Structure probing data (DMS and 2A3) for a 207-nucleotide construct.
The DMS profile rests on 4,821 reads.
The data come from the RNA Mapping Database (RMDB), library RNAMAK.
For DMS the reverse transcriptase was MarathonRT.
2A3 adducts were read by reverse transcription with SuperScript II with manganese.
High 2A3 reactivity points to a flexible backbone, as in loops and unpaired stretches.
RNA sequence: GGGAACGACUCGAGUAGAGUCGAAAAACCUUUGUGUCAUCCCUCUCGCCAUGUCGAGUCUCUCCCAUCCCAUUGGGAUGGUGAGAGACUAAGACAGCAUGGAAACGGGGAUGACACUCUGGUAAAAGAGUACCAGCUGUUCGCAGCUGGUACUCAACAUCACUAUACGGUUCGCCGUAUAGUGAUGAAAAGAAACAACAACAACAAC
Reactivity to DMS in 0.01 (KOAc 150mM, MgCl2 10mM, bicine 150mM(pH8.5), 24C), signal-to-noise 2, nucleotides 027 to 156: a030c010c020u010u000u000g010u010g000u000c000a030u000c000c010c000u000c090u010c090g020c020c000a040u000g000u010c030g040a050g000u000c000u000c000u000c000c000c000a070u010c000c000c010a300u000u010g050g000g010a000u000g020g000u000g040a010g010a020g020a000c010u000a030a100g040a200c300a070g000c030a010u000g010g010a030a040a070c110g040g030g010g020a030u000g020a010c000a010c000u000c030u010g010g020u000a080a060a120a160g000a030g020u000a020c000c000a020g020c020u010g020u000u030c300g030c000a050g030c000u000g000g010u000a000c000u000c000a000a100
Reactivity to 2A3 in 0.01 (KOAc 150mM, MgCl2 10mM, bicine 150mM(pH8.5), 24C), signal-to-noise 6, nucleotides 027 to 156: a000c010c000u020u010u010g000u000g000u010c000a010u000c000c030c020u040c030u050c060g060c010c000a030u050g040u150c020g040a010g010u000c000u010c010u000c000c000c000a000u000c020c000c030a300u160u300g010g000g000a000u000g000g000u280g010a000g000a000g000a000c000u000a000a000g030a040c010a010g020c010a000u020g000g020a040a110a120c090g010g000g010g000a000u000g000a000c000a000c000u000c000u010g000g020u030a070a070a040a090g000a000g000u000a000c000c000a000g000c000u010g060u090u110c280g020c160a000g000c000u000g000g000u000a000c000u000c000a000a000